This 177-nucleotide RNA was probed chemically with DMS and 2A3. It was measured as part of the RMDB library OK2TST. For DMS the reverse transcriptase was MarathonRT. The RNA was probed in 150 mM KOAc, 10 mM MgCl2 and 150 mM bicine (pH 8.5) at 24 C.
[RMDB]
RNA sequence: GGGAACGACUCGAGUAGAGUCGAAAACAGCCAUGAGCGCUCAGACGAGUAGAGGAAACGGAAUCGGCUUCGGCACCGUGCUUUUCAUCGUGUUUCUCGUGUUGAAGCUCACCGGUGUCGUCACGUGCUAGGAAUGUGAGUUCGCUCACAUUCCUAGAAAAGAAACAACAACAACAAC
Reactivity to DMS in 0.01 (KOAc 150mM, MgCl2 10mM, bicine 150mM(pH8.5), 24C), signal-to-noise 4, nucleotides 027 to 126: c090a140g000c040c030a140u010g010a060g030c060g010c090u010c040a070g000a090c070g000a060g020u000a070g000a100g010g010a030a080a050c050g010g010a080a090u010c090g020g000c060u000u000c040g010g000c040a040c010c040g000u000g000c070u000u000u000u010c060a060u010c070g000u010g020u000u010u010c040u000c030g010u010g010u000u000g010a040a100g010c020u000c100a110c130c030g010g020u000g010u000c020g000u000c100a080c130g000u000g000
Reactivity to 2A3 in 0.01 (KOAc 150mM, MgCl2 10mM, bicine 150mM(pH8.5), 24C), signal-to-noise 5, nucleotides 027 to 126: c010a000g050c030c000a090u130g040a010g070c050g020c060u040c050a070g030a110c080g020a020g010u090a050g050a030g010g100a070a050a030c020g030g070a050a080u150c060g060g000c020u080u040c040g050g000c020a010c010c030g030u050g050c040u120u090u040u040c050a110u070c060g060u030g120u160u180u040c120u020c040g040u050g070u030u080g000a010a000g000c010u050c030a030c040c040g030g010u070g000u050c040g040u030c030a040c130g060u110g040